An RNA of 177 nucleotides, treated with 2A3 and DMS and read out base by base. As a SHAPE reagent, 2A3 marks flexible, mostly unpaired nucleotides at the ribose 2'-OH. It was measured as part of the RMDB library OK1LIB. The DMS profile rests on 2,283 reads.

RNA sequence: GGGAACGACUCGAGUAGAGUCGAAAAGGUGUCCUAGGUUGGGAGGCUUAUAAAAUCUUCCACAGGACAAUUCAAGAAAUGAGUGGGGACUUGUGGAAGAUUCAUUUUCUUAGGUGCAGCAAUAGGAAAGCGAAUGCUAGUUCGCUAGCAUUCGCUUAAAAGAAACAACAACAACAAC
Reactivity to 2A3 in 0.01 (KOAc 150mM, MgCl2 10mM, bicine 150mM(pH8.5), 24C), signal-to-noise 2, nucleotides 027 to 126: g090g010u070g040u030c000c000u060a040g030g030u080u030g020g030g000a040g000g010c030u100u030a060u100a170a110a020a000u000c000u000u000c000c030a000c020a040g020g000a030c030a000a000u070u040c020a030a080g110a130a150a150u090g060a000g040u010g000g260g030g040a150c010u080u030g010u000g000g050a030a030g000a000u000u000c010a020u020u010u110u050c010u000u100a040g000g000u000g000c020a040g020c010a150a170u060a150g190g000a160
Reactivity to DMS in 0.01 (KOAc 150mM, MgCl2 10mM, bicine 150mM(pH8.5), 24C), signal-to-noise 1, nucleotides 027 to 126: g000g020u010g000u010c000c000u000a110g030g010u020u010g000g000g000a020g000g020c040u000u020a030u070a090a060a040a030u000c000u000u000c010c030a000c000a010g020g030a100c020a200a010u020u070c010a000a100g000a070a180a120u010g000a000g000u010g040g000g040g000a060c000u010u020g040u000g020g020a020a000g000a040u000u000c050a050u000u000u000u000c010u000u000a040g000g020u000g000c110a030g020c130a030a090u020a070g050g020a090